[RMDB]
RNA sequence: GGGAACGACUCGAGUAGAGUCGAAAACAGCUUCAAGCAUUCACACAUUAGAGUUGCGCCAGCGCAGUUUUCAGCCAGCGCAGUUAGGCAGGCAGGCUUAGAGAGCAGCAGUUUUUUGCGCGCUUCAGCUUUUAGCAAGGCUUGCUUCAUUAGGCAGCUUUAAGAAGCUGUUCGCAGCUUCUUAAAGAAAAGAAACAACAACAACAAC
Reactivity to 2A3 in 0.01 (KOAc 150mM, MgCl2 10mM, bicine 150mM(pH8.5), 24C), signal-to-noise 3, nucleotides 027 to 156: c040a010g050c070u170u180c160a090a080g000c040a110u120u140c030a060c030a030c010a140u130u220a060g020a030g100u050u040g010c020g020c030c040a050g020c020g000c070a020g040u030u050u090u120c040a040g040c000c000a010g010c010g000c040a010g050u080u060a030g020g000c000a000g010g000c030a020g050g000c010u090u100a020g050a010g010a000g070c040a000g000c000a030g050u080u070u030u120u300u210g020c040g000c010g020c000u100u090c020a070g020c000u050u050u060u140a040g000c020a110a020g120g000c010u000u000g010c010u050u080c020a120u060u090a030g050g030c040a020g020
Reactivity to DMS in 0.01 (KOAc 150mM, MgCl2 10mM, bicine 150mM(pH8.5), 24C), signal-to-noise 2, nucleotides 027 to 156: c050a120g010c050u000u010c060a100a070g030c030a090u010u000c060a180c060a040c100a130u000u000a060g010a150g010u010u010g000c030g050c010c040a080g000c030g020c030a150g020u010u000u010u000c080a240g030c020c030a070g060c020g070c020a060g010u000u000a110g040g000c000a010g000g030c020a050g000g000c010u000u000a150g010a150g000a050g000c040a240g030c030a060g030u000u000u000u010u010u000g000c030g020c040g040c030u010u000c070a060g010c020u000u000u010u010a120g030c080a270a160g000g020c040u010u010g010c000u000u000c040a110u020u010a080g010g000c040a150g000